[RMDB]
RNA sequence: GGGAACGACUCGAGUAGAGUCGAAAAGGAGCGGCGGCGCAGCCAGAUGAGGCCCGUUUCGUCGAGAGCGGUCCCCGCCUACGCACGGCUCUCGUUGUGCGGGAAGAGAAAGAAAAGGGCGCAGCACCAUGCGAGCGGAGUUCGCUCCGCUCGCAUGAAAAGAAACAACAACAACAAC
Reactivity to 2A3 in 0.01 (KOAc 150mM, MgCl2 10mM, bicine 150mM(pH8.5), 24C), signal-to-noise 2, nucleotides 027 to 126: g140g030a160g010c040g040g000c010g000g000c020g020c070a020g100c000c000a030g040a100u100g060a080g010g040c000c000c000g070u050u170u170c000g060u010c000g020a050g000a010g100c010g020g010u020c010c000c000c000g030c000c030u060a030c020g030c020a000c020g180g000c000u000c000u020c090g020u000u050g010u040g050c000g000g000g020a110a040g110a030g040a050a190a000g100a000a130a000a000g010g020g000c040g020c020a020g040c020a040c010
Reactivity to DMS in 0.01 (KOAc 150mM, MgCl2 10mM, bicine 150mM(pH8.5), 24C), signal-to-noise 1, nucleotides 027 to 126: g000g050a090g030c060g010g010c030g030g050c000g000c000a030g010c010c130a160g010a190u040g010a130g000g000c010c030c000g000u000u000u010c040g010u010c060g000a140g000a000g060c000g000g040u000c000c000c000c070g010c050c000u010a090c010g030c120a040c000g020g000c000u000c050u000c050g000u080u000g000u010g030c030g010g000g010a020a050g060a070g000a170a060a080g000a060a050a060a080g000g000g030c040g000c050a080g000c130a150c100